Chemical mapping of a 177-nucleotide RNA with DMS and 2A3. It was measured as part of the RMDB library TTRDEL. The reactions ran in a buffer of 150 mM KOAc, 10 mM MgCl2 and 150 mM bicine (pH 8.5), at 24 C. For 2A3, 10,596 sequencing reads were counted.

RNA sequence: GGGAACGACUCGAGUAGAGUCGAAAAGAUAUGGACGAGAGGACAUGCUAUGGCUCGGAAACGAGCCCUAGCAACAGCCUCGAGUCCUAAGUCAAAACCUUAGAAGCCCUUCGGGGCUUCUAAGGAACGUUAUACAUACGUUCGCGUAUGUAUAACGAAAAGAAACAACAACAACAAC
Reactivity to DMS in 0.01 (KOAc 150mM, MgCl2 10mM, bicine 150mM(pH8.5), 24C), signal-to-noise 5, nucleotides 027 to 126: g010a020u000a130u000g000g010a000c000g000a300g000a020g010g010a050c070a150u010g020c000u000a010u000g000g000c000u000c010g010g000a020a020a070c000g000a000g000c000c000c010u000a000g010c000a070a090c180a210g000c000c000u000c000g000a300g000u000c000c010u000a010a050g000u000c010a130a130a090a140c010c000u000u000a010g000a020a010g010c000c000c000u000u000c190g040g000g000g010c000u000u000c000u000a000a000g000g000a020a020
Reactivity to 2A3 in 0.01 (KOAc 150mM, MgCl2 10mM, bicine 150mM(pH8.5), 24C), signal-to-noise 2, nucleotides 027 to 126: g020a010u030a010u060g000g000a000c010g010a010g010a010g060g020a050c110a230u300g000c000u000a000u020g000g000c000u000c000g000g000a000a010a010c000g000a000g000c000c000c010u000a010g000c020a030a030c040a020g010c010c000u000c000g000a000g000u000c000c000u000a000a000g000u000c000a000a040a100a170c000c000u000u000a010g000a020a010g000c020c010c000u020u090c220g030g000g030g010c000u010u010c010u000a010a010g000g010a000a000